[RMDB]
RNA sequence: GGGAACGACUCGAGUAGAGUCGAAAAACUAUAAACUUUCAAGGAGAGAGGCUGUGUCUUCUUCAUGUUUAUAUCUGCUGCAACACUGAGUUCAUGGCUUUUCACACAUAAUUGCUCAACAGAGCAGCAAUCAUCAGCGGUUCGCCGCUGAUGAUUGAAAAGAAACAACAACAACAAC
Reactivity to 2A3 in 0.01 (KOAc 150mM, MgCl2 10mM, bicine 150mM(pH8.5), 24C), signal-to-noise 1, nucleotides 027 to 126: a080c150u170a100u110a070a040a110c090u190u190u170c160a160a050g090g000a000g040a000g030a040g070g150c050u040g060u110g030u100c010u060u050c000u040u000c000a050u030g030u000u040u010a100u030a100u050c060u120g000c000u030g000c080a030a010c040a000c120u050g100a020g060u050u040c030a010u030g040g000c040u080u030u120u060c040a090c010a040c000a020u140a230a040u260u140g000c000u020c030a140a040c060a130g050a010g080c010a000g020
Reactivity to DMS in 0.01 (KOAc 150mM, MgCl2 10mM, bicine 150mM(pH8.5), 24C), signal-to-noise 1, nucleotides 027 to 126: a150c030u000a030u000a050a030a110c020u010u010u010c110a070a100g020g010a050g010a060g000a130g000g000c040u000g000u020g000u010c050u010u010c010u060u010c060a080u000g020u000u000u000a020u010a050u000c070u000g020c010u010g010c070a030a080c110a080c130u000g000a020g000u000u010c080a050u000g010g040c080u000u000u000u000c140a150c170a060c180a140u000a040a120u000u040g030c000u020c000a010a110c300a110g020a100g000c020a020g000